[RMDB]
RNA sequence: GGGAACGACUCGAGUAGAGUCGAAAAGAAAGAAAGAAACUGUCCUACGUCCGAGUUCCACUAAGCAAGUUUUGAGAUCGUUUUAAAAACAAAAACUUGACACGUUGAGCUCGUUCGUGGGAUGGAAUCGCGUGUGUUAGUUCGCUAACACACGCGAAAAAGAAACAACAACAACAAC
Reactivity to 2A3 in 0.01 (KOAc 150mM, MgCl2 10mM, bicine 150mM(pH8.5), 24C), signal-to-noise 2, nucleotides 027 to 126: g070a000a020a060g120a020a120a000g030a000a070a020c000u000g000u000c010c010u010a000c000g000u000c000c000g000a000g010u020u000c010c000a000c020u010a140a060g020c000a030a030g010u000u000u000u120g130a140g020a140u170c130g030u020u030u040u200a100a090a010a010a000c030a020a000a000a000a000c000u000u000g010a010c000a000c020g000u000u000g000a000g030c000u000c000g000u000u000c000g000u000g010g000g000a000u000g000g000a000a020
An RNA of 177 nucleotides, treated with 2A3 and read out base by base. Source: RMDB library RFM100, as collected in RNAgym. The reactions ran in a buffer of 150 mM KOAc, 10 mM MgCl2 and 150 mM bicine (pH 8.5), at 24 C.